An RNA of 207 nucleotides, treated with 2A3 and read out base by base. The reactions ran in a buffer of 150 mM KOAc, 10 mM MgCl2 and 150 mM bicine (pH 8.5), at 24 C. For 2A3 the reverse transcriptase was SuperScript II with manganese.
[RMDB]
RNA sequence: GGGAACGACUCGAGUAGAGUCGAAAAAAAAGAAGAGAUUCAAACACGUAUUGCAAAGCGUGUAGCACAAGAAUUAGAACACAAUACACUGGUCAACUUAGGCAUAGGUUUGCCAACAAAAGUAGCCAACUAUAUUCCUGAAGGUGUAACCAUUACACCAGCACUCGAUAUUCGUAUCGAGUGCUGGAAAAGAAACAACAACAACAAC
Reactivity to 2A3 in 0.01 (KOAc 150mM, MgCl2 10mM, bicine 150mM(pH8.5), 24C), signal-to-noise 2, nucleotides 027 to 156: a000a000a000a000g190a040a010g020a000g050a010u070u090c120a040a150a000c010a000c000g050u110a040u190u300g110c120a060a050a010g060c020g000u000g000u060a020g090c040a000c000a110a100g030a020a090u110u050a020g030a110a000c140a010c010a150a000u210a060c100a050c080u070g020g000u060c060a030a030c030u000u030a000g000g040c020a030u060a020g010g000u060u030u040g000c010c000a040a000c050a020a170a010a000g110u110a020g000c000c000a020a020c000u090a050u000a000u300u120c010c000u050g110a060a000g000g000u030g010u090a040a040c050c010a000u010u210a040c050a050